[RMDB]
RNA sequence: GGGAACGACUCGAGUAGAGUCGAAAAGCCUACUAUGUGUGACAUCAAACAAAUGUUGUUCUGCAUGGAAGUUGUAAACAAGUACUUCGAAAUCUAUGACGGUGGUUGUCUUAAUGCUUCUGAAGUGGAGUAUAACUCUCUUCGGAGAGUUAUACUCAAAAGAAACAACAACAACAAC
Reactivity to DMS in 0.01 (KOAc 150mM, MgCl2 10mM, bicine 150mM(pH8.5), 24C), signal-to-noise 2, nucleotides 027 to 126: g020c010c010u010a160c080u000a040u000g050u000g000u010g010a060c020a010u000c070a090a090a180c220a070a100a140u000g010u000u000g020u010u010c020u000g010c020a030u020g020g000a040a050g000u000u000g000u020a080a070a080c100a070a080g010u000a030c070u000u000c000g000a030a070a090u010c070u000a050u000g020a080c070g040g010u000g000g010u000u010g010u000c020u000u000a030a080u000g010c080u010u010c010u010g010a070a040g000u000g000
Reactivity to 2A3 in 0.01 (KOAc 150mM, MgCl2 10mM, bicine 150mM(pH8.5), 24C), signal-to-noise 1, nucleotides 027 to 126: g040c000c000u000a000c030u010a000u020g100u020g040u080g020a060c000a000u000c000a040a000a300c040a120a170a050u210g020u040u000g010u060u120c010u030g020c000a050u010g000g010a050a000g000u170u120g090u120a080a080a050c020a020a000g130u060a000c010u000u010c020g030a050a100a090u000c070u070a100u130g020a000c040g010g090u090g000g150u060u260g000u010c020u010u090a050a020u070g000c000u020u000c000u070g040a100a110g040u060g090